[RMDB]
RNA sequence: GGGAACGACUCGAGUAGAGUCGAAAACAUUAAUCAAGCGUAGUAUAAGGUGGCAUGCGAUUAUGCAAACAUCGAGGUCCUGGAAAAACCGAUGUAAAAUAAAUAACAGCACCCGUUUAGCGAGCGUUUCACUGUUCUAGUUCGCUAGAACAGUGAAAAAAGAAACAACAACAACAAC
Reactivity to DMS in 0.01 (KOAc 150mM, MgCl2 10mM, bicine 150mM(pH8.5), 24C), signal-to-noise 3, nucleotides 027 to 126: c010a070u030u040a100a120u050c100a080a120g040c060g020u010a060g030u010a020u040a120a070g020g040u010g010g000c080a090u020g000c060g020a080u030u000a040u040g020c150a130a120a170c050a020u000c000g010a080g010g010u010c060c000u000g070g020a070a030a100a060a050c060c010g000a050u000g000u000a010a040a040a040u010a030a030a060u050a070a050c030a030g000c120a050c080c010c020g000u000u010u010a040g030c020g010a090g000c110g050u020
Reactivity to 2A3 in 0.01 (KOAc 150mM, MgCl2 10mM, bicine 150mM(pH8.5), 24C), signal-to-noise 5, nucleotides 027 to 126: c020a040u190u210a150a060u170c070a100a040g020c010g080u070a020g050u040a140u030a200a030g060g020u010g060g000c040a020u040g010c020g090a080u060u020a040u240g060c060a030a070a040c020a030u010c020g000a090g020g060u050c030c040u040g030g000a030a060a020a020a030c000c010g010a010u030g040u110a050a020a040a040u140a020a070a040u170a060a020c040a030g000c010a020c010c010c000g030u040u060u100a040g020c040g010a000g010c020g020u000